Structure probing data (DMS and 2A3) for a 177-nucleotide construct. The DMS profile rests on 24,586 reads.
RNA sequence: GGGAACGACUCGAGUAGAGUCGAAAACUGAUUUUGUGAAUAUUCCUAAAGAUGAGUUGGAAGCUUACGAUGCUCAUGGAAUUUCGUUGGCUAAUCCUCGCGUUCACAUAUCUGACGAGAAUGCUCCAUCAUAUAGUAUCUUCGGAUACUAUAUGAUAAAAGAAACAACAACAACAAC
Reactivity to DMS in 0.01 (KOAc 150mM, MgCl2 10mM, bicine 150mM(pH8.5), 24C), signal-to-noise 9, nucleotides 027 to 126: c090u000g010a040u000u000u000u000g020u000g000a040a050u010a130u010u000c020c030u010a080a100a140g010a080u000g010a050g010u000u010g010g010a160a070g000c030u010u000a040c050g010a040u000g000c070u000c120a140u010g010g010a050a070u000u000u000c030g010u000u000g000g010c020u000a090a130u010c110c010u000c040g010c120g010u000u000c020a030c030a030u000a030u000c020u010g010a130c090g000a060g010a060a110u000g000c050u000c030c100
Reactivity to 2A3 in 0.01 (KOAc 150mM, MgCl2 10mM, bicine 150mM(pH8.5), 24C), signal-to-noise 9, nucleotides 027 to 126: c020u020g030a030u100u090u100u090g020u010g020a060a020u080a110u130u110c030c020u090a130a070a050g130a140u140g020a010g070u100u060g080g050a070a010g010c020u030u020a020c010g020a030u040g010c030u040c150a150u170g110g070a100a110u050u050u020c020g010u010u020g010g000c010u030a060a080u060c000c010u010c020g020c020g020u020u010c010a010c000a030u040a020u010c040u060g070a080c070g010a020g060a190a050u120g040c020u010c030c000